[RMDB]
RNA sequence: GGGAACGACUCGAGUAGAGUCGAAAAAGACUUACACCAACUUUGUUGGUUACGUCACAACCACAUUCAAGAGAAAACACUUUCGCCCCACCCCAGAUGGAUGUCGAAAUGCAUACAAUUGGAAGACAAUCCAUGGCGAGUUCGCUCGCCAUGGAUUAAAAGAAACAACAACAACAAC
Reactivity to DMS in 0.01 (KOAc 150mM, MgCl2 10mM, bicine 150mM(pH8.5), 24C), signal-to-noise 1, nucleotides 027 to 126: a030g000a050c010u000u010a190c280a040c000c010a000a010c010u000u000u000g000u000u000g000g000u010u010a170c300g000u000c040a110c120a120a210c000c000a160c250a080u010u000c070a030a160g000a140g000a090a080a120a050c120a120c170u000u000u000c010g000c040c030c010c030a100c080c110c040c040a150g000a000u000g000g000a030u000g000u000c030g000a130a070a100u070g070c030a070u000a040c080a110a040u000u000g000g030a140a050g000a080c040